[RMDB]
An RNA of 207 nucleotides, treated with 2A3 and DMS and read out base by base.
For 2A3 the reverse transcriptase was SuperScript II with manganese.
For DMS the reverse transcriptase was MarathonRT.
RNA sequence: GGGAACGACUCGAGUAGAGUCGAAAAGGUCGUUAGGCUCAUUUGACUGUUACGGUCUUGUUAUGGCUUGGCACAAAGAGCACGGCGUAGAAUUGCGCGAUCGAAGGUUGAAUUUUGAAUGGUGGAAACCUGAGUACGGAAUUAAUCUCUAUCAGGAUGUAAACAUAGCGUUCGCGCUAUGUUUACAAAAAGAAACAACAACAACAAC
Reactivity to 2A3 in 0.01 (KOAc 150mM, MgCl2 10mM, bicine 150mM(pH8.5), 24C), signal-to-noise 2, nucleotides 027 to 156: g040g010u020c030g000u080u100a030g000g020c020u010c100a170u040u040u180g080a060c070u060g040u170u140a000c080g000g000u000c000u040u040g100u110u120a190u070g020g030c020u000u120g010g100c000a010c020a080a150a010g020a020g000c040a000c050g040g010c000g030u000a040g080a150a080u140u100g000c040g000c020g020a060u090c020g030a080a040g040g010u050u100g010a050a180u050u040u070u160g070a080a030u030g000g020u010g000g000a080a010a000c000c000u010g000a010g030u090a040c020g020g000a020a000u110u070a160a130u110c070u060c010u040a090u100c010a040g000g000a020
Reactivity to DMS in 0.01 (KOAc 150mM, MgCl2 10mM, bicine 150mM(pH8.5), 24C), signal-to-noise 1, nucleotides 027 to 156: g010g000u000c030g080u000u010a130g010g000c000u020c080a190u010u020u000g030a130c000u000g000u000u000a100c120g020g000u010c030u000u010g000u000u000a060u010g000g030c040u040u000g030g000c060a090c030a060a040a100g020a100g040c030a070c070g060g030c040g010u010a090g030a070a110u000u000g000c030g030c090g030a070u000c060g000a070a050g020g010u010u020g040a070a090u000u010u000u010g010a090a060u000g000g040u010g020g000a120a020a100c050c010u010g050a100g010u010a180c080g040g000a040a230u010u000a030a070u000c020u000c020u010a130u000c010a050g020g030a230